[RMDB]
RNA sequence: GGGAACGACUCGAGUAGAGUCGAAAAUAGAAUGAUACUUGGUAGGCAGAGCCUUAGCUUGUCCUAAUUACAUUUUGGUAUCAUCAUCUUUCAGCUUUGAAGUUGAGGCCCUGCUCCCUUGGACAUACAUUUACAAACGUUUCGACGUUUGUAAAUGAAAAGAAACAACAACAACAAC
Reactivity to 2A3 in 0.01 (KOAc 150mM, MgCl2 10mM, bicine 150mM(pH8.5), 24C), signal-to-noise 5, nucleotides 027 to 126: u110a010g130a060a040u060g030a030u040a090c020u030u070g070g020u080a070g060g000c010a010g000a000g030c000c000u010u010a010g000c000u030u040g030u040c000c020u070a140a130u180u150a100c090a170u080u140u090u190g080g000u070a040u080c030a030u020c010a040u000c060u020u140u050c040a040g040c050u130u150u180g070a040a010g000u020u020g010a010g010g000c010c000c000u000g010c010u060c010c010c010u020u050g040g010a010c020a040u140a040
Reactivity to DMS in 0.01 (KOAc 150mM, MgCl2 10mM, bicine 150mM(pH8.5), 24C), signal-to-noise 6, nucleotides 027 to 126: u000a090g010a140a040u000g000a090u000a050c010u000u000g010g010u010a100g010g010c020a020g000a040g010c010c090u000u000a040g010c020u000u000g010u000c020c020u000a060a070u010u010a110c190a160u010u000u010u000g010g010u000a030u000c050a030u000c060a070u000c040u000u000u000c070a060g000c090u000u000u000g000a040a030g020u000u000g010a020g000g000c010c010c010u000g010c020u010c230c000c020u000u010g000g010a110c100a090u010a170
Chemical mapping of a 177-nucleotide RNA with 2A3 and DMS. Conditions: 150 mM KOAc, 10 mM MgCl2 and 150 mM bicine (pH 8.5), 24 C. High 2A3 reactivity points to a flexible backbone, as in loops and unpaired stretches. DMS adducts were read by reverse transcription with MarathonRT. For DMS, 10,854 sequencing reads were counted.